[RMDB]
RNA sequence: GGGAACGACUCGAGUAGAGUCGAAAAGAUAUGGAGCUUGACGACAUGAAGCACUUUGAUCUACGUAACAUCUCACUCGGAAACGAGUGAGUGGUAGGGAGUGCCAUGUCGUCAAGCUCCUAAGUCACGUAUCUAAUUUCUUCGGAAAUUAGAUACGAAAAGAAACAACAACAACAAC
Reactivity to DMS in 0.01 (KOAc 150mM, MgCl2 10mM, bicine 150mM(pH8.5), 24C), signal-to-noise 4, nucleotides 027 to 126: g010a060u010a300u010g010g000a000g000c000u000u000g010a010c000g010a010c000a020u010g000a220a150g020c010a010c010u000u010u010g000a120u000c010u000a010c000g010u010a030a110c240a030u020c010u000c000a020c000u000c000g010g000a160a130a200c000g000a030g020u000g000a000g020u000g000g000u000a020g000g000g000a010g020u000g010c010c010a000u000g000u000c000g000u000c000a000a000g010c000u000c000c000u000a000a060g000u000c070a300